The record gives the reactivity of an RNA of 207 nucleotides to 2A3. The 2A3 profile rests on 633 reads. The RNA was probed in 150 mM KOAc, 10 mM MgCl2 and 150 mM bicine (pH 8.5) at 24 C. 2A3 adducts were read by reverse transcription with SuperScript II with manganese. It was measured as part of the RMDB library OK3TST. Reactivities are given for positions 27 through 156.
RNA sequence: GGGAACGACUCGAGUAGAGUCGAAAAGGCAGCAACUUAAGAAAGGAAGUGAAACUUCAAAAUGGCAGAACCAGAUUUCAGUGGCUGGGCCACAAAGAAUGGGCUUAAGUGCUCCGAUGGUAGGACUAUCAUGGACGGCGCUUUCAAGCACCAGGACGUCCUAGUACUCGUUCGCGAGUACUAGGACAAAAGAAACAACAACAACAAC
Reactivity to 2A3 in 0.01 (KOAc 150mM, MgCl2 10mM, bicine 150mM(pH8.5), 24C), signal-to-noise 2, nucleotides 027 to 156: g060g000c000a010g030c060a020a080c050u120u190a160a020g010a100a140a030g000g040a040a050g000u090g040a240a060a050c040u100u090c040a000a030a060a170u100g040g030c000a020g000a140a000c020c030a010g030a020u060u170u230c110a030g020u060g120g000c060u100g010g080g000c000c010a010c020a030a070a000g040a030a090u060g010g010g000c020u000u050a000a000g010u060g020c030u000c070c040g040a020u020g000g050u020a010g010g280a030c080u010a010u090c020a020u080g000g000a020c050g100g000c010g010c000u040u050u060c060a000a010g000c040a150c070c010a010g000g060a030c010